[RMDB]
RNA sequence: GGGAACGACUCGAGUAGAGUCGAAAAAGAGGCGAUACGUCGCCUCAAGCUUGGUGCUUAGCUUCUUUCACCAAGCAUAUUACACGCGGAUAACCGCCAAAGGAGAAACACCGACUACGGUCAGUGAGGAAGUUGGUUCGGUUCGCCGAACCAACAAGAUCGAUAAGCAGUUCGCUGCUUAUCGAUCAAAAGAAACAACAACAACAAC
Reactivity to 2A3 in 0.01 (KOAc 150mM, MgCl2 10mM, bicine 150mM(pH8.5), 24C), signal-to-noise 1, nucleotides 027 to 156: a000g000a000g000g030c010g020a010u060a000c270g080u010c000g000c000c000u000c000a000a020g010c000u000u000g000g000u020g000c010u010u030a040g050c000u030u000c000u000u020u000c000a000c000c000a020a000g000c000a010u090a030u070u160a060c150a030c100g020c010g000g010a090u080a300a300c050c000g000c000c000a000a050a010g040g010a040g000a000a090a000c010a020c000c020g000a020c020u100a020c130g050g020u010c020a040g010u010g050a100g040g130a080a030g020u000u000g000g000u000u000c000g000g000u070u020c230g000c090c000g000a000a000c000c000a000a000c000a000a010
About this RNA:
Source: RMDB library M2RFPK, as collected in RNAgym. This 207-nucleotide RNA was probed chemically with 2A3. The 2A3 profile rests on 899 reads.